Structure probing data (2A3) for a 177-nucleotide construct.
The data come from the RNA Mapping Database (RMDB), library OK1LIB.
The reactions ran in a buffer of 150 mM KOAc, 10 mM MgCl2 and 150 mM bicine (pH 8.5), at 24 C.
For 2A3, 218 sequencing reads were counted.
RNA sequence: GGGAACGACUCGAGUAGAGUCGAAAAUUGCCGAUGAUUAAUCAAGUAUAUCAACUCGUUGCACCGAGACAGUUCGACGUCACAUAUAAUAAUGUUGAUAUUUAUGGUAAUCAUGUCAUCGUAAGACUGGCCGUCGGCUAUUCGUAGCCGACGGCCAAAAAGAAACAACAACAACAAC
Reactivity to 2A3 in 0.01 (KOAc 150mM, MgCl2 10mM, bicine 150mM(pH8.5), 24C), signal-to-noise 1, nucleotides 027 to 126: u000u020g090c000c060g110a000u000g000a000u020u020a300a030u130c110a080a120g210u000a000u000a000u000c000a190a000c000u000c130g070u130u000g110c190a000c000c000g100a090g150a220c190a040g000u000u260c110g000a000c220g000u000c000a070c000a170u150a020u190a300a170u260a000a040u040g000u000u000g000a040u000a040u020u070u050a170u000g020g040u000a030a030u000c000a000u020g000u000c000a070u000c000g300u110a280a000g130a240c000